An RNA of 177 nucleotides, treated with DMS and read out base by base. The RNA was probed in 150 mM KOAc, 10 mM MgCl2 and 150 mM bicine (pH 8.5) at 24 C.
RNA sequence: GGGAACGACUCGAGUAGAGUCGAAAACAAAUGCAGAUUCAGGAGUUCUGGGGCCAGGCCUGAGACUCUGCAUUUAUAGCAAGCCCCCAGGUGACGCCGACACAGACCUCCCUUGGAGCAGUAAGGGCACAUGCAGGCAUUUCGAUGCCUGCAUGUGAAAAGAAACAACAACAACAAC
Reactivity to DMS in 0.01 (KOAc 150mM, MgCl2 10mM, bicine 150mM(pH8.5), 24C), signal-to-noise 1, nucleotides 027 to 126: c100a020a020a000u000g000c000a000g000a040u010u000c010a020g010g020a050g050u010u010c030u000g000g010g010g000c090c050a070g040g020c020c000u010g010a060g000a050c170u000c000u000g020c010a000u000u010u000a090u020a090g010c160a080a120g010c070c000c030c020c110a070g000g010u000g000a050c130g020c010c020g020a100c080a060c060a130g000a080c080c010u000c000c010c030u010u000g020g030a060g000c080a050g020u010a070a030g000g000g020